[RMDB]
RNA sequence: GGGAACGACUCGAGUAGAGUCGAAAAGGUAAAGGAUGGACUACUAUUGCGGUCUGAAUUGAGGACGUUUUGAUAAAUUAUUUUGAUAACCGUUCGAAUACUAAUAAUAAAUAUCCUCCGGCAUAGCAGUAAUACUGCCAUUCGUGGCAGUAUUACUAAAAGAAACAACAACAACAAC
Reactivity to 2A3 in 0.01 (KOAc 150mM, MgCl2 10mM, bicine 150mM(pH8.5), 24C), signal-to-noise 6, nucleotides 027 to 126: g050g010u090a010a000a120g060g000a030u160g020g010a010c010u050a020c010u050a120u140u210g020c050g000g020u060c030u040g140a120a100u090u090g020a070g000g000a000c000g010u010u010u000u020g040a030u050a050a080a050u250u260a110u120u140u030u010g040a030u020a010a020c000c020g000u020u010c050g010a030a050u040a170c060u040a010a070u080a120a030u070a030a150a040u180a020u040c010c010u010c000c000g020g030c050a070u070a050g050c010
Reactivity to DMS in 0.01 (KOAc 150mM, MgCl2 10mM, bicine 150mM(pH8.5), 24C), signal-to-noise 4, nucleotides 027 to 126: g020g010u020a050a090a060g010g010a050u040g010g020a060c050u000a080c060u010a080u030u010g000c070g000g000u010c090u020g010a120a090u010u030g020a150g000g000a030c010g030u000u000u000u010g000a160u010a020a040a180u020u020a110u020u010u000u000g020a130u000a040a020c100c030g010u000u000c000g000a120a060u020a050c050u010a040a060u030a040a100u030a030a060a090u010a080u000c000c010u010c030c040g010g040c090a040u010a080g010c270
Structure probing data (2A3 and DMS) for a 177-nucleotide construct. It was measured as part of the RMDB libraries RFM100 and RFMREP. Values cover nucleotides 27 to 126. For 2A3 the reverse transcriptase was SuperScript II with manganese.